[RMDB]
RNA sequence: GGGAACGACUCGAGUAGAGUCGAAAAGCGCACCAGCGCCUCGAUCCAAGAGUGGUUCGAGGGCGGCGGGCUGCAGCGCGUCAUCGACUGGUUCGUGCGCCUCAAGGACACGAUCACCGGGUUUGUGAGCGCGGACGGCGGCGGCGACACGAUGCAGGCCAUCCACAUUAUUCGUAAUGUGGAUGGCAAAAGAAACAACAACAACAAC
Reactivity to 2A3 in 0.01 (KOAc 150mM, MgCl2 10mM, bicine 150mM(pH8.5), 24C), signal-to-noise 2, nucleotides 027 to 156: g080c050g030c010a090c150c060a140g000c000g200c000c020u000c000g000a020u020c000c010a070a040g140a020g280u160g110g030u040u020c000g050a010g000g120g160c080g050g050c060g000g000g000c000u010g020c000a030g000c000g000c010g080u000c010a030u020c020g220a240c050u150g180g000u090u190c030g010u080g190c010g030c040c010u060c000a030a130g050g000a100c000a050c010g160a070u110c070a010c270c040g010g000g000u000u050u050g020u000g050a060g020c060g000c000g000g050a040c000g030g020c020g010g000c000g000g000c000g000a000c000a000c050g010a030u010g000c000a000g020
Conditions: 150 mM KOAc, 10 mM MgCl2 and 150 mM bicine (pH 8.5), 24 C. An RNA of 207 nucleotides, treated with 2A3 and read out base by base. 2A3 adducts were read by reverse transcription with SuperScript II with manganese.